[RMDB]
RNA sequence: GGGAACGACUCGAGUAGAGUCGAAAAUUGCAUUGACCCACUGCUCGAGGACUCCUUCUCUUCCCGCUCGGGAUUUCUUCGUCUCGGACCGGCUCAUCUUCGGCAAAGGGCGGCGGUCCUCAGUGCUAAAUCACGCACUUCGGUGCGUGAAAAAGAAACAACAACAACAAC
Reactivity to 2A3 in 0.01 (KOAc 150mM, MgCl2 10mM, bicine 150mM(pH8.5), 24C), signal-to-noise 3, nucleotides 027 to 129: u180u150g050c030a030u040u070g000a030c020c020c020a060c000u020g000c000u010c030g000a000g020g040a080c050u000c010c000u050u020c040u000c000u030u070c000c000c000g040c040u030c030g080g000g040a070u050u040u020c010u030u070c010g080u030c050u030c060g020g010a000c020c010g000g000c000u000c010a130u050c020u110u040c010g010g000c000a070a080a060g030g000g000c030g030g010c000g030g000u010c020c000u060c020a030g000u030g020c030u040a010a090a080
Reactivity to DMS in 0.01 (KOAc 150mM, MgCl2 10mM, bicine 150mM(pH8.5), 24C), signal-to-noise 4, nucleotides 027 to 129: u090u070g020c110a000u010u050g000a000c020c010c050a130c030u040g000c000u040c020g020a040g020g060a150c090u070c050c020u000u020c000u010c040u010u020c050c040c030g030c090u030c100g070g010g000a070u000u020u050c080u030u000c120g040u030c040u040c050g030g040a100c110c040g010g000c010u030c040a100u030c000u030u020c090g040g070c110a040a090a130g010g010g040c170g000g000c090g040g020u030c010c020u020c150a010g030u030g000c040u020a030a040a080